[RMDB]
RNA sequence: GGGAACGACUCGAGUAGAGUCGAAAAUGACUGUUGGGCCCUAGCAUCCCCAACAGUCUAAUGAUGUAGUGGUGUGGAGUACGCGAGAGCGUACUCAGCAUCCGAGAGGAUGCGAUUCCGACCCACAUUAUUGCAUCUAACGGUCGGAAGCUAGGGGCCUAAAUACUGAGUUCGCUCAGUAUUUAGGAAAAGAAACAACAACAACAAC
Reactivity to DMS in 0.01 (KOAc 150mM, MgCl2 10mM, bicine 150mM(pH8.5), 24C), signal-to-noise 1, nucleotides 027 to 156: u000g020a050c000u010g070u010u010g010g030g020c020c010c040u010a080g000c020a160u000c050c010c000c030a040a020c040a030g000u000c000u010a050a050u020g030a060u000g000u000a080g030u020g010g000u000g000u000g000g010a030g000u000a000c000g100c010g000a300g010a300g020c000g010u000a010c000u010c010a040g000c000a000u000c000c020g000a300g030a300g000g010a030u000g010c000g010a170u000u010c030c050g010a140c060c020c010a080c040a040u000u020a030u000u000g000c020a020u010c030u000a160a180c100g040g010u010c020g030g010a100a020g000c000u000a040g000g010g020g010
Reactivity to 2A3 in 0.01 (KOAc 150mM, MgCl2 10mM, bicine 150mM(pH8.5), 24C), signal-to-noise 3, nucleotides 027 to 156: u070g000a000c010u010g000u010u000g010g000g000c000c010c000u000a000g000c020a190u300c030c000c010c000a010a000c000a000g000u010c000u000a010a040u070g020a010u010g010u040a010g010u010g020g000u010g020u020g000g020a020g000u000a000c000g000c000g030a060g000a010g110c000g000u000a000c000u000c030a000g000c000a000u000c000c000g040a040g010a040g060g010a010u000g000c040g010a050u220u070c070c050g030a040c040c010c000a010c000a000u020u060a010u040u000g030c020a010u010c000u020a070a040c060g100g090u120c060g100g040a030a000g000c000u010a010g000g000g010g010

Chemical mapping of a 207-nucleotide RNA with DMS and 2A3. The reactions ran in a buffer of 150 mM KOAc, 10 mM MgCl2 and 150 mM bicine (pH 8.5), at 24 C.